This 177-nucleotide RNA was probed chemically with 2A3 and DMS.
Reactivities are given for positions 27 through 126.
The data come from the RNA Mapping Database (RMDB), library TTRDEL.
The DMS profile rests on 4,092 reads.
Conditions: 150 mM KOAc, 10 mM MgCl2 and 150 mM bicine (pH 8.5), 24 C.
RNA sequence: GGGAACGACUCGAGUAGAGUCGAAAAGAUAUGGAAUUAGCUUUUGACGAUUUAAGGAUCGGAAACGAUCCGGAGAUCGAUAAGCUACUUCCUAAGUCAAACACGAUCAUGUUCGCAUGAUCGUGAACCACAAUACCUACUUCGGUAGGUAUUGUGGAAAAGAAACAACAACAACAAC
Reactivity to 2A3 in 0.01 (KOAc 150mM, MgCl2 10mM, bicine 150mM(pH8.5), 24C), signal-to-noise 4, nucleotides 027 to 126: g040a030u100a080u170g000g000a010a010u020u010a010g000c000u110u100u110u200g280a170c040g000a000u000u040u060a020a010g010g000a000u010c010g020g000a060a040a020c020g000a000u000c010c000g000g000a030g000a000u010c000g010a020u020a020a000g000c000u010a000c000u000u020c010c010u010a150a020g070u030c050a100a080a040c010a000c010g000a000u000c000a000u000g070u120u100c280g030c130a000u000g000a000u010c000g000u000g000a000a010
Reactivity to DMS in 0.01 (KOAc 150mM, MgCl2 10mM, bicine 150mM(pH8.5), 24C), signal-to-noise 5, nucleotides 027 to 126: g000a020u000a300u000g000g000a010a000u000u000a010g000c000u000u000u010u010g010a190c100g000a020u000u000u000a290a190g000g000a010u000c000g010g000a060a090a160c010g000a010u000c000c010g000g000a200g000a010u000c000g010a110u000a020a000g000c010u010a010c100u000u000c000c010u000a050a110g000u010c010a130a100a300c000a000c000g010a010u000c000a010u000g000u010u020c220g020c000a010u000g000a010u000c000g020u000g000a040a080